[RMDB]
An RNA of 177 nucleotides, treated with 2A3 and DMS and read out base by base. 2A3 adducts were read by reverse transcription with SuperScript II with manganese. The DMS profile rests on 8,404 reads.
RNA sequence: GGGAACGACUCGAGUAGAGUCGAAAAGGUCCUUUCCAUUGGAUCAAACCCGCUCAAUGCCUGGAGAUUUGGGCGUGCCCCCGCAAGACUGCUAGCCGAGUAGCGUUGGGUUGCGAAAGGCCUUGUGUAAUUGGCACCUUUUCGAAGGUGCCAAUUAAAAAGAAACAACAACAACAAC
Reactivity to 2A3 in 0.01 (KOAc 150mM, MgCl2 10mM, bicine 150mM(pH8.5), 24C), signal-to-noise 6, nucleotides 027 to 126: g010g010u050c010c000u030u080u090c100c080a210u140u130g010g000a010u010c030a020a040a100c020c000c000g000c020u030c010a030a050u110g050c000c040u110g080g060a160g050a140u080u060u050g040g000g000c020g010u030g020c000c000c010c010c010g000c030a020a020g020a050c070u130g060c030u130a020g000c000c010g010a010g020u010a010g010c010g040u080u150g130g100g030u120u120g000c010g010a030a000a000g000g000c000c000u020u020g010u000g010
Reactivity to DMS in 0.01 (KOAc 150mM, MgCl2 10mM, bicine 150mM(pH8.5), 24C), signal-to-noise 4, nucleotides 027 to 126: g010g000u010c000c000u010u000u020c140c200a150u050u030g000g000a030u010c020a050a100a150c060c020c010g010c070u020c070a080a030u010g000c010c010u010g000g000a100g000a140u020u030u010g020g000g010c050g010u000g000c030c000c000c050c030g000c130a080a060g000a120c060u010g000c040u020a080g010c030c020g010a090g000u010a020g010c030g010u020u010g010g010g000u020u020g000c040g000a090a080a110g020g000c030c020u010u000g010u010g010